[RMDB]
RNA sequence: GGGAACGACUCGAGUAGAGUCGAAAAUAGCCCUCGUUCGCGAGGGCUACACACACCUUUGUGCGCUGUAGGGAGUGCACGUGACCCAUUGGGUCACCGGUGCACAUCGAUCUACAGGUGGCACUCUGGUUUACCGCCAGAUCUUCGGAUCUGGCAACGUAUGCCUAUCGUUCGCGAUAGGCAUACGAAAAGAAACAACAACAACAAC
Reactivity to 2A3 in 0.01 (KOAc 150mM, MgCl2 10mM, bicine 150mM(pH8.5), 24C), signal-to-noise 3, nucleotides 027 to 156: u040a000g000c000c000c010u010c000g040u040u050c270g020c020g120a000g030g010g000c000u020a000c020a000c000a000c010a000c000c000u010u000u000g010u000g000c060g010c090u010g000u000a000g060g000g020a040g010u010g040c000a000c000g000u000g020a000c030c040c220a300u170u300g000g010g000u000c000a000c010c090g200g000u010g010c000a010c000a130u130c020g060a090u060c010u020a020c010a040g140g020u120g300g000c000a000c000u000c000u010g000g050u070u090u170a130c030c050g010c000c000a000g000a000u000c000u010u160c220g140g010a000u010c010u000g000g000c000a020a000